Chemical mapping of a 177-nucleotide RNA with DMS and 2A3.
Values are in units of 0.01, from 0 to 300, in steps of 10.
The data come from the RNA Mapping Database (RMDB), library RFM100.
For DMS the reverse transcriptase was MarathonRT.
Conditions: 150 mM KOAc, 10 mM MgCl2 and 150 mM bicine (pH 8.5), 24 C.
RNA sequence: GGGAACGACUCGAGUAGAGUCGAAAAAAAGAAAACGCAUUAAUCAAGCGUAGUAUAAGGUGGCAUGCGAUUAUGCAAACAUCGAGGUCCUGGAAAAACCGAUGUAAAAUAAAUAACAGCACCCGUUAUAGGCCAAAAUAUUCGUAUUUUGGCCUAUAAAAGAAACAACAACAACAAC
Reactivity to DMS in 0.01 (KOAc 150mM, MgCl2 10mM, bicine 150mM(pH8.5), 24C), signal-to-noise 2, nucleotides 027 to 126: a090a090a100g000a150a070a030a020c030g020c000a010u020u000a180a080u000c200a060a160g000c020g000u010a050g000u030a080u010a070a110g000g000u000g000g030c030a040u000g020c120g010a090u020u090a010u050g010c020a230a110a250c010a050u000c030g000a040g010g000u030c100c020u030g000g030a040a130a130a020a060c060c010g000a020u000g020u010a040a050a060a080u030a030a000a070u040a090a060c050a010g000c290a000c030c020c000g020u000u010
Reactivity to 2A3 in 0.01 (KOAc 150mM, MgCl2 10mM, bicine 150mM(pH8.5), 24C), signal-to-noise 2, nucleotides 027 to 126: a000a000a000g110a030a100a000a000c050g000c020a050u130u210a240a000u120c140a110a060g000c090g020u000a000g030u080a110u050a150a020g010g030u050g060g120c100a080u070g030c000g100a050u020u070a000u130g000c000a100a120a000c000a000u010c000g050a060g000g070u180c010c010u040g040g000a070a020a000a000a000c000c050g020a030u000g060u070a020a000a000a070u150a000a050a050u270a040a000c010a010g010c070a030c000c000c000g040u000u000